Chemical mapping of a 177-nucleotide RNA with 2A3 and DMS. DMS adducts were read by reverse transcription with MarathonRT. 2A3 adducts were read by reverse transcription with SuperScript II with manganese. The 2A3 profile rests on 4,191 reads. The DMS profile rests on 18,379 reads.
[RMDB]
RNA sequence: GGGAACGACUCGAGUAGAGUCGAAAAACAUCAAGGAACAAGAGUGAAAUGACCCCUCCCCUCCAUUCAUAUGUGAAGAAUUCCCAGAAACAAUGCAGAGGGCAAAAGGAAUUGGCACUGAUGGUGGAUAUGUAACAGAGUUCGCUCUGUUACAUAUAAAAGAAACAACAACAACAAC
Reactivity to 2A3 in 0.01 (KOAc 150mM, MgCl2 10mM, bicine 150mM(pH8.5), 24C), signal-to-noise 3, nucleotides 027 to 126: a000c030a050u080c040a040a090g090g000a070a080c050a120a050g080a050g100u090g090a100a120a200u230g170a200c010c020c000c020u000c010c000c010c000u010c000c000a010u030u050c010a000u040a030u180g040u020g030a060a060g050a070a050u020u030c010c010c000a010g080a040a090a020c030a030a010u080g010c020a000g050a100g120g060g000c000a050a060a000a000g040g000a020a040u070u050g060g000c020a020c040u040g030a040u050g020g000u010g000g000
Reactivity to DMS in 0.01 (KOAc 150mM, MgCl2 10mM, bicine 150mM(pH8.5), 24C), signal-to-noise 9, nucleotides 027 to 126: a090c080a070u000c070a070a090g010g010a090a070c080a080a100g010a080g020u010g000a080a090a090u010g010a200c030c010c000c010u000c010c000c010c010u010c010c020a060u000u010c060a060u000a070u010g010u000g010a050a060g000a060a110u000u000c010c000c020a160g010a120a070a060c100a040a050u010g010c060a060g000a100g010g000g010c060a020a040a090a060g000g010a050a050u000u000g010g020c030a030c050u000g010a070u000g000g020u000g000g010